[RMDB]
RNA sequence: GGGAACGACUCGAGUAGAGUCGAAAAUCUCAUGACAUUUCUCCUUUCAACCGAAACUGUUUUAAACAGAUUCGUUGUUCAACGCAAUGACAACCCCAAUCAUUGCGUUUUUUUUCGCCUAAAGAAUUAACUGUCAUUUUUUCGAAAAUGACAGUUAAAAAGAAACAACAACAACAAC
Reactivity to 2A3 in 0.01 (KOAc 150mM, MgCl2 10mM, bicine 150mM(pH8.5), 24C), signal-to-noise 3, nucleotides 027 to 126: u040c010u000c030a030u080g050a000c050a070u130u130u000c080u080c010c010u030u250u150c040a060a030c070c010g010a030a010a010c000u010g120u040u050u120u260a120a190a000c050a020g030a170u050u030c000g030u050u040g020u090u130c020a000a010c020g030c010a000a000u010g010a030c020a060a280c000c000c000c020a010a030u010c000a000u000u010g020c000g000u000u000u000u000u000u000u000u000c030g010c020c020u080a080a080a010g020a020a030u030
Reactivity to DMS in 0.01 (KOAc 150mM, MgCl2 10mM, bicine 150mM(pH8.5), 24C), signal-to-noise 3, nucleotides 027 to 126: u000c010u000c020a100u010g000a130c100a080u010u000u000c010u000c030c080u000u000u010c070a050a060c140c050g020a020a020a090c000u000g000u000u000u060u020a050a110a040c010a010g000a130u010u000c010g010u010u000g000u010u010c150a040a030c000g000c000a010a010u000g000a010c030a040a210c000c000c000c020a100a200u000c000a010u000u020g000c000g000u020u020u000u000u000u010u000u000c010g010c150c070u030a080a130a060g000a070a030u000